[RMDB]
RNA sequence: GGGAACGACUCGAGUAGAGUCGAAAAGGUACCGUACGGAUCGUACGUACUACUAGCCAUGGGUACAGUACACUGCCAUGAGCUCUAGAUGGAUCCACCAUGGACUAGAGAGUCAGUACACGAUGAGCCCUCGCUAUGAGUUCGCUCAUAGCGAGGGAAAAGAAACAACAACAACAAC
Reactivity to DMS in 0.01 (KOAc 150mM, MgCl2 10mM, bicine 150mM(pH8.5), 24C), signal-to-noise 2, nucleotides 027 to 126: g010g010u030a010c040c060g010u000a030c040g010g040a040u010c050g000u010a080c070g000u000a030c010u000a090c060u000a060g000c060c040a030u000g000g010g000u010a100c080a050g030u000a070c060a080c120u000g010c000c030a060u020g010a140g010c040u020c050u010a060g000a080u000g010g000a140u000c080c060a090c040c030a040u000g000g000a140c000u000a030g010a140g010a070g010u020c170a040g020u000a020c020a100c120g000a060u020g000a100g000
Reactivity to 2A3 in 0.01 (KOAc 150mM, MgCl2 10mM, bicine 150mM(pH8.5), 24C), signal-to-noise 2, nucleotides 027 to 126: g050g010u050a020c050c060g010u050a050c070g080g080a120u130c080g040u030a020c020g030u000a010c030u010a010c010u010a020g010c010c040a010u040g000g000g050u230a090c040a060g030u010a040c170a100c050u070g000c000c010a090u090g060a060g030c020u000c040u070a100g000a160u030g030g000a020u020c030c030a040c020c030a060u020g040g060a130c010u020a060g020a000g010a000g140u020c030a000g030u060a000c040a000c050g060a060u110g060a030g020

An RNA of 177 nucleotides, treated with DMS and 2A3 and read out base by base. The 2A3 profile rests on 1,748 reads. 2A3 adducts were read by reverse transcription with SuperScript II with manganese. Reactivities are given for positions 27 through 126. The reactions ran in a buffer of 150 mM KOAc, 10 mM MgCl2 and 150 mM bicine (pH 8.5), at 24 C. The data come from the RNA Mapping Database (RMDB), library OK2TRN.